Source: RMDB library M2RFPK, as collected in RNAgym. This 207-nucleotide RNA was probed chemically with 2A3. For 2A3 the reverse transcriptase was SuperScript II with manganese. The reactions ran in a buffer of 150 mM KOAc, 10 mM MgCl2 and 150 mM bicine (pH 8.5), at 24 C.
RNA sequence: GGGAACGACUCGAGUAGAGUCGAAAACAGGAAACUGGUUAAUCGUUUUCCUUGGUAGUCUAGCGGAAACCAUAAAUAAGAAGAACUCUAAGUGCUUGAGUAGAGUUAAAAUAAUUAGACAGGCAAUUAAGGUACUCCACGUUCGCGUGGAGUACAACAUGCCUGUACCCUUCGGGGUACAGGCAUGAAAAGAAACAACAACAACAAC
Reactivity to 2A3 in 0.01 (KOAc 150mM, MgCl2 10mM, bicine 150mM(pH8.5), 24C), signal-to-noise 2, nucleotides 027 to 156: c030a000g000g050a050a010a080c060u100g020g090u160u210a050a100u120c010g000u030u090u070u150c000c010u020u030g040g030u050a090g070u020c040u060a020g030c010g030g060a090a040a000c030c000a080u100a150a130a000u090a090a030g090a040a000g050a040a050c000u000c010u010a010a030g040u080g220c000u010u000g010a010g010u000a000g010a000g020u100u100a000a020a000a000u100a050a000u120u010a000g010a020c000a000g000g010c000a010a020u210u170a140a070g110g010u000a000c000u000c000c000a000c010g010u030u050c190g010c000g110u030g000g010a000g000u000a000c000a000a000